RNA sequence: GGGAACGACUCGAGUAGAGUCGAAAACACACUCCCUUCGGGGAGUGUGAAAGAACGCGUGGGACACGCAAGGAGGAGCGAGUGGGACGCGACAAACCCAAAAAAGUGGAUAGUUCGCUAUCCACAACAUCAGUCUUCACUUCGGUGAAGACUGAUGAAAAGAAACAACAACAACAAC
Reactivity to DMS in 0.01 (KOAc 150mM, MgCl2 10mM, bicine 150mM(pH8.5), 24C), signal-to-noise 1, nucleotides 027 to 126: c000a050c000a000c000u000c000c000c030u000u010c170g040g010g000g010a010g000u000g000u010g020a030a020a070g010a080a070c040g010c010g060u020g010g020g040a070c090a060c000g000c030a040a150g060g020a300g010g010a100g000c020g000a100g040u000g020g010g010a060c030g000c040g020a090c080a040a130a030c020c000c000a050a010a090a050a140a100g030u000g000g000a050u000a010g010u000u010c270g000c000u000a020u000c000c000a010c000a030a130

Conditions: 150 mM KOAc, 10 mM MgCl2 and 150 mM bicine (pH 8.5), 24 C. An RNA of 177 nucleotides, treated with DMS and read out base by base.